Description: This 177-nucleotide RNA was probed chemically with DMS and 2A3. Reactivities are given for positions 27 through 126. 2A3 adducts were read by reverse transcription with SuperScript II with manganese. Conditions: 150 mM KOAc, 10 mM MgCl2 and 150 mM bicine (pH 8.5), 24 C. Values are in units of 0.01, from 0 to 300, in steps of 10. For DMS the reverse transcriptase was MarathonRT. The DMS profile rests on 4,078 reads.

[RMDB]
RNA sequence: GGGAACGACUCGAGUAGAGUCGAAAAGAUAUGGACCAGGAACUACCUACCAGGAGCGUUGAAAUCGGAAACGAUGGAGCUCCGGUAGGCCUGGUCCUAAGUCAAAACCGCGUGUUCGCACGCGGAAGUUAAGCUAAGACUUCGGUCUUAGCUUAACAAAAGAAACAACAACAACAAC
Reactivity to DMS in 0.01 (KOAc 150mM, MgCl2 10mM, bicine 150mM(pH8.5), 24C), signal-to-noise 4, nucleotides 027 to 126: g010a040u010a300u010g000g000a020c000c000a000g000g000a080a030c050u020a300c030c010u010a000c000c000a220g050g000a010g020c000g010u000u000g000a100a120a040u000c010g010g000a130a080a130c000g020a020u000g020g000a100g010c010u000c010c000g000g000u000a000g000g000c000c010u000g000g000u010c000c000u000a000a090g000u000c050a080a050a090a160c010c000g010c000g030u000g010u000u010c170g040c010a010c000g000c010g000g000a000a030
Reactivity to 2A3 in 0.01 (KOAc 150mM, MgCl2 10mM, bicine 150mM(pH8.5), 24C), signal-to-noise 3, nucleotides 027 to 126: g060a020u050a040u110g010g000a010c000c000a010g000g020a070a060c080u160a100c300c010u010a020c040c090a300g000g000a020g000c040g190u300u090g030a030a020a030u010c010g000g020a080a040a060c010g010a000u020g040g000a010g000c000u000c000c010g000g000u000a000g010g000c000c010u000g000g000u000c000c000u000a010a010g010u010c010a000a010a030a070c000c000g000c010g020u020g020u010u120c300g000c150a010c010g000c000g000g010a030a000